[RMDB]
RNA sequence: GGGAACGACUCGAGUAGAGUCGAAAAGAUAUGGAUAAGAGCCGAGCGUGAACUACUUCAGUAUCUCGGAAACGAGAUACGAAGCACGUAUCUCUUAUCCUAAGUCAAACGCUGGUUCGCCAGCGAAUCUACAGACCAUCUUCGGAUGGUCUGUAGAAAAAGAAACAACAACAACAAC
Reactivity to 2A3 in 0.01 (KOAc 150mM, MgCl2 10mM, bicine 150mM(pH8.5), 24C), signal-to-noise 1, nucleotides 027 to 126: g010a030u040a020u130g000g010a010u000a020a000g000a000g030c170c300g200a110g130c010g060u030g000a080a050c040u190a030c000u300u040c040a080g000u000a010u000c040u000c000g000g070a030a040a020c030g000a000g000a000u000a010c000g000a000a000g050c020a000c030g000u010a160u000c000u000c000u000u000a000u070c000c010u000a100a010g030u020c000a170a000a000c020g000c030u000g010g010u040u030c220g070c180c020a000g020c000g000a030a180
Reactivity to DMS in 0.01 (KOAc 150mM, MgCl2 10mM, bicine 150mM(pH8.5), 24C), signal-to-noise 2, nucleotides 027 to 126: g000a010u000a300u040g020g010a000u000a000a010g000a030g060c300c160g010a210g010c000g030u000g010a070a010c040u010a300c020u000u000c000a070g060u000a010u000c000u010c010g000g000a090a060a100c000g000a010g010a000u000a000c000g000a010a000g020c020a030c020g020u000a120u000c000u020c000u000u000a000u000c000c000u000a010a120g030u010c030a150a100a290c020g010c000u000g000g000u000u010c240g000c000c010a020g020c010g000a070a070
An RNA of 177 nucleotides, treated with 2A3 and DMS and read out base by base.
It was measured as part of the RMDB library TTRDES.
Reactivities are given for positions 27 through 126.
For DMS, 1,178 sequencing reads were counted.
The reactions ran in a buffer of 150 mM KOAc, 10 mM MgCl2 and 150 mM bicine (pH 8.5), at 24 C.
The 2A3 profile rests on 1,718 reads.
For DMS the reverse transcriptase was MarathonRT.
For 2A3 the reverse transcriptase was SuperScript II with manganese.